[RMDB]
RNA sequence: GGGAACGACUCGAGUAGAGUCGAAAACAGUGAGACUUCGGUCUCACUGAAAUGACUAUGCACCAUGACGAGGACGAAGAUGCGGAGGACGACGAGGAACAUAAACAGCAAGGUUCGCCUUGCUGAAGACUACUACGUUCUUCGGAACGUAGUAGUCAAAAGAAACAACAACAACAAC
Reactivity to 2A3 in 0.01 (KOAc 150mM, MgCl2 10mM, bicine 150mM(pH8.5), 24C), signal-to-noise 2, nucleotides 027 to 126: c000a020g000u000g000a000g000a000c010u040u120c230g170g000u000c000u020c000a000c010u000g000a000a010a000u110g040a020c010u040a010u220g010c030a020c010c020a050u130g030a030c060g010a020g070g000a020c020g030a080a020g030a060u060g040c040g020g020a020g020g030a020c020g000a010c010g010a050g040g000a030a020c040a090u190a100a160a060c000a000g010c000a000a000g060g000u030u040c130g100c030c000u000u000g000c000u010g010a020a000
Reactivity to DMS in 0.01 (KOAc 150mM, MgCl2 10mM, bicine 150mM(pH8.5), 24C), signal-to-noise 2, nucleotides 027 to 126: c010a020g010u000g000a000g010a010c000u000u010c200g020g020u000c000u000c000a010c000u000g010a030a070a080u000g010a120c070u020a060u000g000c070a140c040c020a080u010g000a110c030g000a050g000g000a060c070g020a060a060g010a060u000g010c050g000g020a050g000g010a070c080g000a100c080g020a050g000g010a040a050c100a080u000a070a120a150c020a000g000c030a020a000g010g030u000u000c260g010c000c000u000u000g020c000u010g020a020a060

Conditions: 150 mM KOAc, 10 mM MgCl2 and 150 mM bicine (pH 8.5), 24 C. An RNA of 177 nucleotides, treated with 2A3 and DMS and read out base by base. The DMS profile rests on 2,002 reads. It was measured as part of the RMDB library M2PK50. For 2A3 the reverse transcriptase was SuperScript II with manganese.